[RMDB]
RNA sequence: GGGAACGACUCGAGUAGAGUCGAAAAUACUUCAACCCAAACUGGAGAAGCCAAGCCGCCAUGUACCAAGAGAACAACUUGAUUAUCGAAGAGAGUGAUGUGAGGGCAUGGAUAGAAGAUAGCAAAGGUGAUUGGAUAUCUUCGGAUAUCCAAUCACAAAAGAAACAACAACAACAAC
Reactivity to 2A3 in 0.01 (KOAc 150mM, MgCl2 10mM, bicine 150mM(pH8.5), 24C), signal-to-noise 1, nucleotides 027 to 126: u210a030c000u110u130c000a020a150c010c000c000a000a090a020c090u100g150g030a140g040a080a000g040c010c010a030a080g030c030c030g000c000c020a000u000g010u060a300c030c000a050a010g070a000g030a180a030c070a030a030c010u050u010g000a000u110u150a090u290c170g080a100a010g020a020g000a000g040u050g060a060u130g040u030g000a030g000g050g000c000a000u000g000g000a030u040a110g030a020a010g000a010u120a030g000c000a110a000a070g150
Reactivity to DMS in 0.01 (KOAc 150mM, MgCl2 10mM, bicine 150mM(pH8.5), 24C), signal-to-noise 1, nucleotides 027 to 126: u100a160c120u000u010c150a070a150c000c020c020a050a170a150c170u010g000g000a170g020a140a100g030c060c010a070a070g020c080c050g000c020c060a040u000g000u000a060c030c010a060a160g000a100g040a040a050c060a120a030c020u000u000g010a220u000u010a110u000c180g010a030a090g020a210g010a040g000u000g010a090u010g010u000g000a180g000g000g000c020a020u010g020g000a050u000a060g000a030a110g000a100u020a040g000c180a040a050a090g040

This 177-nucleotide RNA was probed chemically with 2A3 and DMS. 2A3 adducts were read by reverse transcription with SuperScript II with manganese. Conditions: 150 mM KOAc, 10 mM MgCl2 and 150 mM bicine (pH 8.5), 24 C.